[RMDB]
RNA sequence: GGGAACGACUCGAGUAGAGUCGAAAAUGUCACUCGAUGUGAGUACAUGGUGGAGACACUAUGUACUCACAAGCCAUUAUGUCUCCAGAUGUGAGUACAUGGUGGAGACACUAUGUACUCACAUGCGCCACGAGACGGCAAGAGUGACAGUGGCGCACGUUAGCUCGUAUUUCGAUACGAGCUAACGAAAAGAAACAACAACAACAAC
Reactivity to DMS in 0.01 (KOAc 150mM, MgCl2 10mM, bicine 150mM(pH8.5), 24C), signal-to-noise 2, nucleotides 027 to 156: u000g000u010c010a010c000u010c020g030a300u000g030u010g020a040g010u000a020c020a030u000g040g040u000g020g010a300g030a300c010a020c000u000a000u000g000u000a000c010u000c010a000c020a000a070g000c020c050a150u010u010a080u030g010u000c020u000c010c070a110g000a160u010g000u010g060a070g000u010a020c000a010u010g000g020u000g010g050a300g020a300c020a010c000u000a000u000g020u000a020c000u020c010a020c010a000u010g070c040g030c010c010a060c020g000a120g030a060c000g000g100c020a140a130g000a060g000u000g000a010c010a030g000u000g000g020c020g050c010a300
Reactivity to 2A3 in 0.01 (KOAc 150mM, MgCl2 10mM, bicine 150mM(pH8.5), 24C), signal-to-noise 2, nucleotides 027 to 156: u080g000u000c000a000c000u000c010g020a040u050g010u000g000a000g000u010a000c010a010u010g020g000u000g010g030a080g010a030c000a000c010u000a010u010g010u000a000c000u010c000a010c000a000a000g000c000c000a100u200u170a130u300g020u000c010u000c040c020a040g010a250u070g060u010g000a000g010u000a000c010a010u000g000g000u020g010g020a020g020a030c000a000c010u010a000u010g000u010a050c000u000c000a000c000a000u000g000c000g000c000c010a000c000g010a000g000a010c020g000g000c050a080a070g020a000g000u000g000a000c000a000g000u000g000g010c000g000c000a000